Notes
The record gives the reactivity of an RNA of 177 nucleotides to 2A3 and DMS. For DMS the reverse transcriptase was MarathonRT. For 2A3 the reverse transcriptase was SuperScript II with manganese. It was measured as part of the RMDB library M2PK90.

RNA sequence: GGGAACGACUCGAGUAGAGUCGAAAAUAUUAGGGUGUGAGAGUAUCUCUCUCCCAGCCGGUUCGCGCAGCCAUCUUUUUCGACUUUACUUGGGUUAGCUGCGCGAACUGGCUGGCCUUCCCAGCAAGCUGUAGAGUCUAUUCGUAGACUCUACAGCAAAAGAAACAACAACAACAAC
Reactivity to 2A3 in 0.01 (KOAc 150mM, MgCl2 10mM, bicine 150mM(pH8.5), 24C), signal-to-noise 2, nucleotides 027 to 126: u300a060u150u210a060g050g000g000u120g020u010g080a010g000a020g030u160a300u120c110u010c000u010c000u030c060c000c000a010g020c000c010g000g000u010u000c000g040c010g000c020a000g000c020c000a040u040c080u010u200u110u120u150c090g090a070c090u140u190u180a070c040u130u190g000g000g040u000u020a020g010c000u010g000c000g000c000g000a000a010c010u000g000g030c000u000g000g000c010c000u040u010c010c000c010a010g080c020a020a040
Reactivity to DMS in 0.01 (KOAc 150mM, MgCl2 10mM, bicine 150mM(pH8.5), 24C), signal-to-noise 1, nucleotides 027 to 126: u010a100u000u010a090g000g010g040u000g010u010g030a010g010a030g010u000a120u000c160u010c000u010c010u000c030c020c010a000g010c000c010g000g010u020u000c010g010c000g020c010a030g020c010c100a050u010c010u020u000u000u000u000c100g010a090c100u010u000u010a030c150u020u000g010g010g010u010u000a020g010c010u010g010c010g010c000g000a020a010c010u000g000g020c010u000g000g000c020c020u000u000c000c000c000a230g010c230a070a110